[RMDB]
RNA sequence: GGGAACGACUCGAGUAGAGUCGAAAACAAACUUACACUUGACGAGAACUACGAACCAAUUUGUACAGCGCAAAAAGAAAUGCUCGGACAAGAUGCGCUGCGCAAGUCACUGUCCGAAACCACAGGACCAGUAUGAUGGGUUCGCCCAUCAUACUGGAAAAGAAACAACAACAACAAC
Reactivity to 2A3 in 0.01 (KOAc 150mM, MgCl2 10mM, bicine 150mM(pH8.5), 24C), signal-to-noise 1, nucleotides 027 to 126: c000a000a090a070c040u200u140a010c080a010c010u060u100g030a020c040g070a030g080a150a040c090u140a040c100g020a020a050c050c000a050a180u020u120u020g000u040a030c000a000g000c000g020c020a040a130a000a130a040g110a070a250a060u140g060c010u000c000g040g000a040c000a060a000g020a140u070g000c000g000c020u020g000c030g010c020a020a070g030u120c050a010c140u080g000u000c000c000g000a060a030a030c060c080a070c000a090g050g100a020
Reactivity to DMS in 0.01 (KOAc 150mM, MgCl2 10mM, bicine 150mM(pH8.5), 24C), signal-to-noise 1, nucleotides 027 to 126: c090a040a050a190c060u000u020a250c170a000c030u010u020g000a140c070g000a110g000a060a030c110u000a040c040g000a080a110c060c040a070a030u010u000u010g010u000a020c000a000g010c010g020c030a040a010a100a040a070g000a110a100a080u000g030c080u000c090g000g010a120c060a040a050g000a200u000g020c000g010c000u000g000c090g030c020a000a020g020u020c180a110c160u000g000u000c010c020g030a000a050a060c080c050a080c060a080g000g060a170
This 177-nucleotide RNA was probed chemically with 2A3 and DMS. For DMS the reverse transcriptase was MarathonRT. The 2A3 profile rests on 1,147 reads. For DMS, 555 sequencing reads were counted.